[RMDB]
RNA sequence: GGGAACGACUCGAGUAGAGUCGAAAAGAUAUGGAUCCUCUGACGCAACAGCUGUGACAUCGGAAACGAUGUACAGACAUGCGUUUGAGGAUCCUAAGUCAAAUCCGAUACGUUCGCGUAUCGGAAACAUAAUAUUUACGUUCGCGUAAAUAUUAUGAAAAGAAACAACAACAACAAC
Reactivity to 2A3 in 0.01 (KOAc 150mM, MgCl2 10mM, bicine 150mM(pH8.5), 24C), signal-to-noise 9, nucleotides 027 to 126: g010a000u030a010u060g010g000a000u000c000c000u000c010u030g010a000c000g010c050a300a300c090a300g010c020u010g020u080g220a070c000a000u000c000g010g000a010a020a010c010g000a000u000g000u010a000c000a000g020a000c050a190u300g000c000g000u000u010u000g000a000g010g000a000u000c000c000u000a000a000g000u000c010a010a010a250u010c000c000g000a000u000a000c010g020u040u090c300g000c010g140u000a010u010c000g000g000a010a010a000
Reactivity to DMS in 0.01 (KOAc 150mM, MgCl2 10mM, bicine 150mM(pH8.5), 24C), signal-to-noise 9, nucleotides 027 to 126: g000a010u000a120u010g000g000a010u000c000c000u000c000u000g000a010c000g040c000a110a070c260a150g000c000u000g000u000g010a030c000a010u000c000g020g000a040a030a070c000g020a020u000g010u000a010c000a000g000a020c050a300u010g020c000g010u000u000u000g000a010g010g010a000u000c000c000u000a000a050g000u000c010a120a140a160u000c000c000g000a010u000a000c000g020u000u020c250g030c010g030u000a000u000c000g010g000a010a030a130

Source: RMDB library TTRDES, as collected in RNAgym. This 177-nucleotide RNA was probed chemically with 2A3 and DMS. Reactivities are rounded to 0.1 and cut off at 0 and 3. The reactions ran in a buffer of 150 mM KOAc, 10 mM MgCl2 and 150 mM bicine (pH 8.5), at 24 C.